[RMDB]
RNA sequence: GGGAACGACUCGAGUAGAGUCGAAAAGGGGUCAUCCAAAUGUGAUCGUGAGAGGACAUGGUUACCAUGGUGUGUCUCUAUACUGAAGCCUCCACGGUAUAGAGACACACCAUGGUAACCAACAGCCUCCCGAUCGAAUGGAUGACGGAGGCACCCACAAGACUGAGUAGUUCGCUACUCAGUCUUGAAAAGAAACAACAACAACAAC
Reactivity to DMS in 0.01 (KOAc 150mM, MgCl2 10mM, bicine 150mM(pH8.5), 24C), signal-to-noise 1, nucleotides 027 to 156: g000g030g020g000u000c000a000u000c000c000a020a070a080u010g000u010g010a020u010c000g050u020g020a220g040a050g050g020a070c050a240u000g050g080u020u000a000c010c000a030u020g010g000u010g030u000g040u050c000u030c000u000a030u000a040c000u020g000a050a120g000c040c020u000c030c030a300c050g020g030u000a030u000a010g000a000g010a030c000a010c000a000c010c020a000u010g010g000u000a000a000c000c010a020a000c090a150g000c020c000u000c000c030c000g080a020u000c000g000a150a200u000g000g020a020u020g000a020c000g000g010a010g010g030c010a300c000c010c010a300